[RMDB]
RNA sequence: GGGAACGACUCGAGUAGAGUCGAAAAGAUGAGAGCAAGGUUUAUCGAUUAGUCGCGCAGCAAUAUCUGAUGCAAUUUUGUCCUGACGCACAGUUCCGUAAAUGCGUUAUUGAGCUGGAUAUUGCCGCCAUACCGGACCAUUCGUGGUCCGGUAUGGAAAAGAAACAACAACAACAAC
Reactivity to 2A3 in 0.01 (KOAc 150mM, MgCl2 10mM, bicine 150mM(pH8.5), 24C), signal-to-noise 2, nucleotides 027 to 126: g060a030u150g030a050g030a000g060c040a020a090g040g000u070u140u080a130u110c060g010a080u040u140a070g060u070c060g000c030g000c100a020g020c000a000a000u000a010u000c050u120g100a290u110g080c010a050a050u040u080u140u230g080u030c010c010u000g000a020c010g060c000a000c000a060g020u180u090c020c040g020u060a040a060a050u070g000c020g030u030u010a080u060u120g050a030g030c030u000g000g000a010u020a000u000u030g020c030c010g000
Reactivity to DMS in 0.01 (KOAc 150mM, MgCl2 10mM, bicine 150mM(pH8.5), 24C), signal-to-noise 3, nucleotides 027 to 126: g000a090u000g010a070g020a070g000c060a060a050g000g010u000u000u000a080u000c020g000a090u000u010a100g010u000c070g010c140g010c060a050g020c010a010a020u000a010u000c020u000g010a060u010g010c040a040a060u000u010u000u000g020u000c060c110u000g020a030c020g030c030a030c130a300g010u000u030c070c070g000u010a050a140a160u000g000c010g000u000u010a030u010u000g000a190g010c000u000g000g010a020u000a030u000u000g020c010c060g030